This 177-nucleotide RNA was probed chemically with 2A3 and DMS. For 2A3, 2,955 sequencing reads were counted. Reactivities are given for positions 27 through 126. The reactions ran in a buffer of 150 mM KOAc, 10 mM MgCl2 and 150 mM bicine (pH 8.5), at 24 C.

RNA sequence: GGGAACGACUCGAGUAGAGUCGAAAAGAUAUGGAGAAUUGACAUGUUUCACAAUCGGAAACGAUUGUAAACAACAGCAAUCUCCUAAGUCAAAACCAUGGAGGACGGUUCGCCGUCCUCCAUGGAACCUAAUAGAAACCUUCGGGUUUCUAUUAGGAAAAGAAACAACAACAACAAC
Reactivity to 2A3 in 0.01 (KOAc 150mM, MgCl2 10mM, bicine 150mM(pH8.5), 24C), signal-to-noise 2, nucleotides 027 to 126: g010a000u040a060u130g030g030a040g040a160a300u030u000g060a100c090a170u050g040u020u050u060c180a000c000a010a000u010c000g050g000a050a060a080c010g000a000u000u000g000u010a000a020a000c000a030a030c060a040g060c010a010a000u000c010u000c000c000u000a110a020g060u020c030a020a010a080a210c000c020a000u000g010g000a000g030g030a000c050g050g050u060u170c300g080c130c010g000u000c000c000u050c000c030a010u000g010g000a000a000
Reactivity to DMS in 0.01 (KOAc 150mM, MgCl2 10mM, bicine 150mM(pH8.5), 24C), signal-to-noise 2, nucleotides 027 to 126: g020a020u000a300u000g020g000a030g000a080a060u000u000g000a030c070a180u000g000u000u000u000c210a000c000a010a020u010c010g020g000a100a100a210c000g010a020u010u000g020u000a010a010a030c020a050a060c190a130g010c000a000a020u000c000u010c000c010u020a040a140g000u000c000a080a110a090a150c000c000a010u000g010g000a000g020g020a020c000g020g030u000u020c300g020c010c000g030u010c000c010u000c000c000a000u000g000g000a010a040